RNA sequence: GGGAACGACUCGAGUAGAGUCGAAAACAGAAAUGCCAUCCGUCCCCUCGUACACUCCAAGGGAGAUGGAAGUUUUGAAAUCCGCAAUUACAGAGUGCGGUAUUAACUAUGCUGAUGUGGUGCGUGCGGAUAAAGGCUCAUUCGUGAGCCUUUAUCCAAAAGAAACAACAACAACAAC
Reactivity to DMS in 0.01 (KOAc 150mM, MgCl2 10mM, bicine 150mM(pH8.5), 24C), signal-to-noise 2, nucleotides 027 to 126: c020a130g000a010a010a010u030g000c110c100a100u030c040c030g010u000c010c000c000c040u000c100g080u000a130c180a040c180u030c020c030a070a020g000g000g010a040g010a000u000g050g030a030a050g030u000u000u050u000g040a070a090a150u000c000c000g000c010a090a030u000u000a060c270a090g000a090g060u000g010c000g000g000u000a030u010u050a020a040c180u000a030u000g020c030u000g000a090u000g000u000g000g010u000g000c070g030u040g000c300
Reactivity to 2A3 in 0.01 (KOAc 150mM, MgCl2 10mM, bicine 150mM(pH8.5), 24C), signal-to-noise 3, nucleotides 027 to 126: c030a000g260a080a120a010u190g010c040c010a060u020c000c000g080u060c000c010c020c000u010c030g010u040a030c080a050c080u040c020c040a040a030g030g020g000a300g000a000u010g000g050a010a000g010u000u000u080u190g090a080a080a050u010c010c000g060c050a090a060u160u130a110c040a140g160a070g170u030g000c000g000g010u000a010u020u040a000a010c020u040a070u250g010c030u080g040a120u080g050u030g040g070u010g000c060g020u040g060c020